[RMDB]
RNA sequence: GGGAACGACUCGAGUAGAGUCGAAAAUUUUCAGGCACUGUGGUAGGCAAUGGGCAUAUGAACUCAGUAAGACAAGAUUCCUGCCGUCAAGGAGUUUUCAGUGUAGGGGGAAGGUUACAUUAGUAAAUCAUCAAUUGCAGUGCAUCUUUCCUCUAGAAUGAGCAGGACGAUUCGUCGUCCUGCUCAUAAAAGAAACAACAACAACAAC
Reactivity to 2A3 in 0.01 (KOAc 150mM, MgCl2 10mM, bicine 150mM(pH8.5), 24C), signal-to-noise 3, nucleotides 027 to 156: u080u070u030u100c050a020g010g030c030a020c060u070g040u100g130g030u060a030g040g010c000a040a060u050g040g000g000c050a030u070a060u220g050a020a020c020u010c060a040g060u120a070a050g050a070c070a140a010g020a030u060u040c010c000u010g020c020c070g030u040c040a050a050g080g000a070g070u050u040u000u090c050a050g020u010g030u160a010g000g000g000g000g010a000a020g000g000u040u010a030c000a000u010u020a060g020u040a020a060a060u060c070a010u060c050a030a140u040u010g000c000a000g020u000g060c020a030u010c010u000u010u000c000c000u000c010u030a040g060a140
Reactivity to DMS in 0.01 (KOAc 150mM, MgCl2 10mM, bicine 150mM(pH8.5), 24C), signal-to-noise 2, nucleotides 027 to 156: u000u000u000u000c070a110g020g040c020a080c030u000g030u010g000g040u000a040g020g010c060a130a080u010g010g040g040c030a120u000a100u010g030a060a080c030u000c030a090g040u000a050a100g000a120c030a070a070g030a150u000u000c020c010u010g050c050c030g000u000c070a100a060g000g010a080g000u030u010u000u000c050a120g020u000g020u000a070g010g010g000g020g020a040a020g020g020u000u000a020c000a030u010u000a190g020u000a050a040a100u000c130a160u020c200a080a240u000u000g000c010a090g010u000g010c050a030u000c010u000u010u000c030c000u000c030u000a030g030a040